[RMDB]
RNA sequence: GGGAACGACUCGAGUAGAGUCGAAAAUGAGACAUUUGGCUUUUGUAUUCAAUAUGAAAUAUGACAGAAAGGAUGAGUUGAAGGUAUUUGAUUUGAGCAAGGAAGAAGUUGCAUUUAUUAAGAUACAAAAGAAUGCAGAAAAAGAAGGCUUGGGGGAGCAUUUAGUCAGUUUCGACUGACUAAAUGCAAAAGAAACAACAACAACAAC
Reactivity to 2A3 in 0.01 (KOAc 150mM, MgCl2 10mM, bicine 150mM(pH8.5), 24C), signal-to-noise 1, nucleotides 027 to 156: u140g000a040g010a010c040a080u080u070u030g020g000c010u000u020u120u050g040u110a060u140u090c060a110a080u070a050u300g050a100a100a000u200a030u050g070a070c040a040g070a050a060a020g090g000a030u060g000a030g030u070u110g060a080a000g040g020u070a150u090u130u140g080a080u040u060u090g030a010g000c000a010a000g000g030a040a000g000a000a010g040u000u010g020c000a000u010u010u130a040u060u140a090a080g030a050u110a130c010a000a050a000a010g050a010a010u010g000c000a040g010a050a210a000a030a010g060a010a000g050g000c010u050u070g060g000g000g020g000a030
Record summary: This 207-nucleotide RNA was probed chemically with 2A3. 2A3 adducts were read by reverse transcription with SuperScript II with manganese. The data come from the RNA Mapping Database (RMDB), library OK3TST. Values cover nucleotides 27 to 156. The reactions ran in a buffer of 150 mM KOAc, 10 mM MgCl2 and 150 mM bicine (pH 8.5), at 24 C. As a SHAPE reagent, 2A3 marks flexible, mostly unpaired nucleotides at the ribose 2'-OH.